[RMDB]
RNA sequence: GGGAACGACUCGAGUAGAGUCGAAAAAUACGGAGUUGUAGAUUGUGAGGAAGAGGGUGAUUCCGUUCAUCUCUCCUUGUAUCACAAACCCCCUCCUGCGACUCGUCCGGAAACCGAAUUGGUUUUCACCACGAGCCACUUUCGAGUGGCUCGUGGUAAAAGAAACAACAACAACAAC
Reactivity to DMS in 0.01 (KOAc 150mM, MgCl2 10mM, bicine 150mM(pH8.5), 24C), signal-to-noise 1, nucleotides 027 to 126: a010u000a070c120g000g010a130g030u010u000g000u000a100g030a090u000u020g010u000g010a030g000g050a130a080g000a070g000g000g000u000g000a110u000u050c210c250g000u000u010c030a010u010c030u070c000u000c050c030u000u000g000u000a110u000c010a010c000a050a090a280c060c010c000c030c130u020c070c000u070g000c000g000a020c000u030c000g000u010c070c090g000g000a000a000a000c000c000g010a080a180u100u090g000g000u000u000u000u000c020
Reactivity to 2A3 in 0.01 (KOAc 150mM, MgCl2 10mM, bicine 150mM(pH8.5), 24C), signal-to-noise 2, nucleotides 027 to 126: a000u280a040c100g030g000a020g030u030u000g000u000a060g010a180u040u040g030u000g020a000g080g070a130a020g040a120g030g000g000u000g070a060u300u230c270c230g120u100u000c000a000u000c100u000c000u070c050c000u040u110g060u130a130u000c000a010c010a040a210a110c010c000c000c000c000u000c010c020u050g000c000g060a070c060u030c030g050u000c040c020g000g010a000a010a000c000c000g040a110a180u200u170g000g000u000u000u000u000c020

Structure probing data (DMS and 2A3) for a 177-nucleotide construct. For DMS, 1,117 sequencing reads were counted. High DMS reactivity at an A or C suggests that its Watson-Crick edge is free. Values are in units of 0.01, from 0 to 300, in steps of 10.